[RMDB]
RNA sequence: GGGAACGACUCGAGUAGAGUCGAAAAGAAGCGUAAUCGCAAGUUAGGGAUUGUGGUGAAUAUCAACCUGAAGCGUGACAGAGCGAUCGGCAAUCAAGAAGCUUCCGGCGAACAACGCCUAUAGAAAGGGAUAAAUUUUCUUCGGAAAAUUUAUCCCAAAAGAAACAACAACAACAAC
Reactivity to 2A3 in 0.01 (KOAc 150mM, MgCl2 10mM, bicine 150mM(pH8.5), 24C), signal-to-noise 2, nucleotides 027 to 126: g020a000a040g070c030g020u110a040a070u080c000g000c050a000a060g010u050u080a030g150g000g110a140u060u050g040u000g070g040u090g040a060a150u140a030u150c040a010a010c000c000u000g050a010a010g010c000g070u000g000a010c030a210g070a060g110c000g050a220u090c040g020g050c010a050a010u020c000a010a150g090a080a000g050c000u030u000c010c050g040g000c000g030a070a020c000a060a040c030g030c040c020u040a070u050a140g170a060a120a070
Reactivity to DMS in 0.01 (KOAc 150mM, MgCl2 10mM, bicine 150mM(pH8.5), 24C), signal-to-noise 1, nucleotides 027 to 126: g020a100a130g000c020g000u020a150a070u010c000g000c010a040a080g000u000u020a080g060g000g000a070u050u000g060u000g050g110u000g000a160a060u000a120u060c090a000a290c000c000u000g000a030a140g000c040g050u030g000a060c080a030g010a190g070c000g000a090u000c060g000g000c010a040a030u010c010a060a160g030a080a070g000c050u000u000c080c090g000g000c000g000a130a030c110a070a040c130g000c080c050u000a140u030a050g000a100a040a090
Overview: Structure probing data (2A3 and DMS) for a 177-nucleotide construct. The reactions ran in a buffer of 150 mM KOAc, 10 mM MgCl2 and 150 mM bicine (pH 8.5), at 24 C. For 2A3 the reverse transcriptase was SuperScript II with manganese. Source: RMDB library OK1LIB, as collected in RNAgym.